[RMDB]
RNA sequence: GGGAACGACUCGAGUAGAGUCGAAAAAUCAACAUGACCUGUGUCACUUAUAAACAUCAGAUAUUUUCAUACUGCAUUAUAAGAGCUGCAGAUACCUUAACAUUUAAUUUGCAUUCAUCAUUGCUUUAAAAUGUUGCUUGUGAUUAAACCUACAGCAUCAGCUGGCGAUAUUCGUAUCGCCAGCUGAAAAAGAAACAACAACAACAAC
Reactivity to 2A3 in 0.01 (KOAc 150mM, MgCl2 10mM, bicine 150mM(pH8.5), 24C), signal-to-noise 1, nucleotides 027 to 156: a000u110c060a040a060c080a170u230g060a120c050c000u000g010u000g020u020c030a020c110u270u080a000u030a030a050a000c110a030u140c020a050g110a300u080a290u150u120u160u000c090a030u020a150c000u000g060c000a030u050u050a000u030a030a000g000a000g030c000u000g090c000a060g060a140u300a250c000c060u180u280a060a080c060a150u100u020u070a080a040u110u000u110g000c000a000u090u150c050a010u020c030a050u210u140g020c140u250u150u150a040a210a000a000u050g020u040u040g030c110u000u000g000u000g000a000u050u000a110a030a040c000c000u140a110c020a150g240c000a030